[RMDB]
RNA sequence: GGGAACGACUCGAGUAGAGUCGAAAAUAUGGUACCCUCCGCGCCAACCCCUUUUGCCAACAGCAAACUCCGCAGCUCUUCGGGACUGACGGAACCACUUUCCAUGAGGCAACAGGCCAAAUGCAUAGAAAGAGUCCACGUUCGCGUGGACUCUUUCAAAAGAAACAACAACAACAAC
Reactivity to 2A3 in 0.01 (KOAc 150mM, MgCl2 10mM, bicine 150mM(pH8.5), 24C), signal-to-noise 1, nucleotides 027 to 126: u300a150u070g050g000u080a040c030c000c000u000c010c050g050c030g000c040c030a040a060c000c000c000c000u000u020u050u020g060c020c000a020a090c010a060g020c060a090a080a050c150u040c000c000g040c090a070g000c070u060c000u130u080c140g200g000g060a070c000u010g000a110c000g000g040a000a000c000c040a020c010u040u080u000c020c070a090u090g050a000g040g050c000a000a060c060a060g010g000c000c000a090a000a000u100g000c040a090u100a270
Structure probing data (2A3) for a 177-nucleotide construct. Source: RMDB library OK1LIB, as collected in RNAgym. The reactions ran in a buffer of 150 mM KOAc, 10 mM MgCl2 and 150 mM bicine (pH 8.5), at 24 C. For 2A3 the reverse transcriptase was SuperScript II with manganese.